[RMDB]
Record summary: Conditions: 150 mM KOAc, 10 mM MgCl2 and 150 mM bicine (pH 8.5), 24 C. Structure probing data (DMS and 2A3) for a 177-nucleotide construct. For 2A3 the reverse transcriptase was SuperScript II with manganese. DMS adducts were read by reverse transcription with MarathonRT.
RNA sequence: GGGAACGACUCGAGUAGAGUCGAAAACGGACCUCCCUACUCAACCUGGUGGAUUUAGCAGGAUCUGAAAGGCAAAAAGAUACCCAUGCAGAAGGGAUGAGAUUGAAGGAAGCAGGUAACAUAAAUCCUUUAUAUACCCUUUCGAGGGUAUAUAAAGAAAAGAAACAACAACAACAAC
Reactivity to DMS in 0.01 (KOAc 150mM, MgCl2 10mM, bicine 150mM(pH8.5), 24C), signal-to-noise 9, nucleotides 027 to 126: c100g010g000a130c080c030u000c020c010c000u000a100c070u010c050a090a120c050c020u000g010g020u020g000g010a090u000u000u000a070g020c050a070g000g010a050u000c030u000g010a070a080a090g010g010c130a040a050a070a100a050g010a080u000a090c040c010c040a100u010g020c060a140g000a100a070g010g000g010a070u000g000a050g000a090u010u000g010a080a060g000g000a060a070g010c060a040g010g010u010a050a040c070a070u000a050a070a080u000c060
Reactivity to 2A3 in 0.01 (KOAc 150mM, MgCl2 10mM, bicine 150mM(pH8.5), 24C), signal-to-noise 5, nucleotides 027 to 126: c010g010g030a020c010c020u020c000c000c000u030a050c020u020c030a030a050c000c020u040g040g050u080g090g070a130u070u050u080a060g020c030a030g010g030a040u020c010u040g060a130a080a060g090g010c060a060a090a050a020a000g040a020u130a130c010c010c040a050u110g030c010a030g020a100a040g020g010g020a010u040g010a030g030a050u100u170g060a060a020g030g000a030a010g020c040a030g050g040u050a050a020c010a030u120a040a110a020u050c010